[RMDB]
RNA sequence: GGGAACGACUCGAGUAGAGUCGAAAAGCCUACCUAUCAAAAAAACUGGAUACAGUGGCAUCUGGAUGGCCCCCUUGUUUACGCAUGGUUGCAGCCAUCGCCAUCCUAGUCAAGGAUGCAGGGAAGCCAGUUGGAUGUAUUUCGAUACAUCCAACUGAAAAGAAACAACAACAACAAC
Reactivity to 2A3 in 0.01 (KOAc 150mM, MgCl2 10mM, bicine 150mM(pH8.5), 24C), signal-to-noise 7, nucleotides 027 to 126: g080c000c000u040a080c040c010u200a160u200c200a020a060a070a060a060a050a070c050u060g050g020a070u100a210c040a040g050u020g070g000c020a040u040c060u080g090g010a050u020g040g000c000c010c000c010c020u040u070g070u070u180u140a080c120g010c010a010u030g050g030u060u170g030c060a020g010c010c010a030u020c010g000c010c000a020u030c000c010u030a040g110u090c030a040a030g040g000a010u030g030c030a020g030g050g040a060a010g030c010
Reactivity to DMS in 0.01 (KOAc 150mM, MgCl2 10mM, bicine 150mM(pH8.5), 24C), signal-to-noise 5, nucleotides 027 to 126: g000c000c000u000a160c070c050u000a090u040c050a010a000a080a090a050a050a060c060u010g000g000a150u020a130c070a090g050u030g010g020c030a040u000c060u020g000g000a060u000g030g000c000c020c030c000c020u030u000g020u000u000u050a060c170g020c110a050u000g010g010u010u010g040c180a110g000c000c010a030u010c080g010c060c010a000u010c000c010u010a080g000u040c160a080a090g010g000a030u000g000c070a060g000g000g010a060a150g000c090
An RNA of 177 nucleotides, treated with 2A3 and DMS and read out base by base. The 2A3 profile rests on 6,173 reads. The DMS profile rests on 10,043 reads.